[RMDB]
RNA sequence: GGGAACGACUCGAGUAGAGUCGAAAAGAUAUGGACAAUAAUUCCGAAGAACAGACUACGAAUUCGGAAACGAACUAUAGUCUGGGAGGAGAUAUUGUCCUAAGUCAAAGCGUCCUUCGGGACGCAAGUCAUUUGGAAUGUUCGCAUUCCAAAUGACAAAAGAAACAACAACAACAAC
Reactivity to DMS in 0.01 (KOAc 150mM, MgCl2 10mM, bicine 150mM(pH8.5), 24C), signal-to-noise 2, nucleotides 027 to 126: g000a040u000a190u010g000g000a010c000a030a010u000a010a080u000u000c000c000g000a110a150g020a210a260c010a020g000a020c000u000a010c130g040a060a200u010u000c000g010g000a070a020a080c010g000a030a140c300u000a110u000a000g000u000c000u000g000g010g020a050g000g000a000g000a050u000a000u000u000g010u000c030c010u000a010a050g010u000c030a120a060a100g010c000g000u000c000c000u010u000c210g000g000g020a010c000g030c000a000a040
Reactivity to 2A3 in 0.01 (KOAc 150mM, MgCl2 10mM, bicine 150mM(pH8.5), 24C), signal-to-noise 2, nucleotides 027 to 126: g000a010u020a030u060g000g000a000c020a000a010u020a030a100u120u030c000c010g090a260a010g000a020a020c010a010g010a000c000u030a040c060g250a300a300u180u040c020g000g000a030a000a030c010g000a000a020c030u130a060u060a170g000u010c000u000g010g000g010a020g000g000a020g010a020u010a000u000u010g000u020c000c010u000a020a010g020u000c010a050a080a100g000c000g010u000c020c000u020u070c140g170g000g000a000c000g000c000a010a020
Chemical mapping of a 177-nucleotide RNA with DMS and 2A3. Reactivities are given for positions 27 through 126. Source: RMDB library TTRDEL, as collected in RNAgym. The reactions ran in a buffer of 150 mM KOAc, 10 mM MgCl2 and 150 mM bicine (pH 8.5), at 24 C. For DMS the reverse transcriptase was MarathonRT.